[RMDB]
RNA sequence: GGGAACGACUCGAGUAGAGUCGAAAAUUACUCUCAUUUCACAGAAGACAGCCACAUGACAUGGACAGGAUAAAUAACUUGCUGGGAUUCAUACUGCUAAGAAACCACUAGAGAGGUGCUAGAGAGGACAAGGGGUAGGAUUCGUCCUACCCCUUGUAAAAGAAACAACAACAACAAC
Reactivity to DMS in 0.01 (KOAc 150mM, MgCl2 10mM, bicine 150mM(pH8.5), 24C), signal-to-noise 2, nucleotides 027 to 126: u000u020a100c080u000c000u010c040a100u010u010u000c050a110c100a060g010a100a060g030a080c060a050g000c040c040a040c130a050u000g020a060c040a070u000g010g020a080c060a100g000g000a080u000a040a050a090u000a060a070c080u000u000g010c060u000g030g010g000a130u000u000c040a060u000a070c030u020g020c050u020a070a080g010a100a080a120c070c030a040c030u010a050g010a080g010a060g000g010u000g010c020u000a090g010a060g020a060g000g010
Reactivity to 2A3 in 0.01 (KOAc 150mM, MgCl2 10mM, bicine 150mM(pH8.5), 24C), signal-to-noise 1, nucleotides 027 to 126: u010u000a040c010u050c000u000c080a100u020u030u160c020a060c020a050g050a100a010g120a050c000a000g000c000c020a060c060a090u090g020a100c050a100u040g000g000a030c020a020g060g070a050u050a110a160a020u130a070a060c030u030u100g000c010u080g010g070g010a040u010u080c020a050u030a140c020u000g000c000u010a120a000g040a060a100a060c030c040a030c080u130a020g050a020g000a050g120g020u000g000c010u030a050g010a000g020a000g110g010
Source: RMDB library OK2TST, as collected in RNAgym.
The record gives the reactivity of an RNA of 177 nucleotides to DMS and 2A3.
For 2A3, 739 sequencing reads were counted.